Chemical mapping of a 207-nucleotide RNA with DMS and 2A3. For DMS, 5,978 sequencing reads were counted. High DMS reactivity at an A or C suggests that its Watson-Crick edge is free.
RNA sequence: GGGAACGACUCGAGUAGAGUCGAAAACUACCUUUUCGAAGGUAGAGUUUGGGGUCCACGUUGAAAUUGUCAGCGUAGUACUGAAGCCUCCACGGUACGAAACGCUUGGAUUUAUGGAGUGGACGGAGGCACCCUCGGUUAGAUCUUCGGAUCUAAAUGAUCUUUCAAUUUUCGAAUUGAAAGAUCAAAAAGAAACAACAACAACAAC
Reactivity to DMS in 0.01 (KOAc 150mM, MgCl2 10mM, bicine 150mM(pH8.5), 24C), signal-to-noise 2, nucleotides 027 to 156: c000u000a020c000c000u010u000u010u010c270g000a030a010g010g020u000a020g010a100g000u010u000u010g020g010g010g030u010c000c010a020c030g030u010u000g000a030a080a100u000u000g000u010c070a050g020c040g020u000a190g010u010a040c010u000g000a010a130g030c010c000u020c010c020a300c030g010g000u000a030c010g010a130a180a070c020g000c020u000u000g030g020a110u000u000u000a100u010g010g010a140g030u000g000g020a050c030g020g020a050g040g050c020a130c020c010c030u000c060g020g000u000u010a030g000a020u010c000u000u000c250g040g010a050u000c010u000a020a030a210
Reactivity to 2A3 in 0.01 (KOAc 150mM, MgCl2 10mM, bicine 150mM(pH8.5), 24C), signal-to-noise 6, nucleotides 027 to 156: c010u010a000c000c020u060u030u050u150c260g150a030a000g000g010u010a010g000a010g050u040u110u170g070g000g030g010u000c000c000a000c030g050u050u170g170a100a130a120u200u190g190u300c060a000g000c010g040u050a040g010u000a060c000u020g040a120a020g010c010c000u000c000c010a020c000g000g000u010a010c020g050a190a220a030c010g020c050u080u120g150g030a050u020u090u100a110u180g140g030a120g040u050g010g030a030c040g000g000a000g000g000c000a050c000c010c000u030c020g110g030u050u030a010g000a010u010c010u030u070c240g110g000a000u000c010u020a000a010a020